[RMDB]
RNA sequence: GGGAACGACUCGAGUAGAGUCGAAAAGAGGUGAUAAUCUGAUAGGAGGCUGAGAAGUCUGAAGGUAAAUUAUCGUCUAAUUAAAUCUGGUUUAAGUACCUAUCAGAUCUUAGACUAGAUGAAGAUAGUAAGUGGUAGUAUUCGUACUAUCACUUACAAAAGAAACAACAACAACAAC
Reactivity to 2A3 in 0.01 (KOAc 150mM, MgCl2 10mM, bicine 150mM(pH8.5), 24C), signal-to-noise 8, nucleotides 027 to 126: g080a010g000g010u030g010a010u000a030a000u000c000u000g000a000u000a010g020g030a010g020g000c000u010g030a020g020a110a010g020u000c000u030g050a140a040g100g020u070a040a060a040u010u010a010u020c010g020u000c020u010a040a070u100u090a170a100a030u000c000u000g010g000u000u000u010a000a000g000u010a010c000c000u010a010u020c000a000g000a020u000c000u000u000a000g000a000c000u010a010g000a010u040g030a040a040g050a080u180a040
Reactivity to DMS in 0.01 (KOAc 150mM, MgCl2 10mM, bicine 150mM(pH8.5), 24C), signal-to-noise 9, nucleotides 027 to 126: g000a030g000g010u010g000a010u000a010a020u000c010u000g000a020u000a090g060g010a030g000g000c000u000g000a220g000a150a020g010u000c000u000g010a110a110g010g010u010a050a060a040u000u000a000u000c010g010u010c010u000a050a060u030u020a050a060a030u000c000u000g000g000u000u000u000a010a010g010u000a080c020c010u010a040u010c020a020g000a070u020c010u000u000a010g000a000c000u000a010g010a010u010g010a110a090g010a110u030a120

An RNA of 177 nucleotides, treated with 2A3 and DMS and read out base by base. For 2A3, 42,207 sequencing reads were counted. It was measured as part of the RMDB library OK1LIB. The reactions ran in a buffer of 150 mM KOAc, 10 mM MgCl2 and 150 mM bicine (pH 8.5), at 24 C.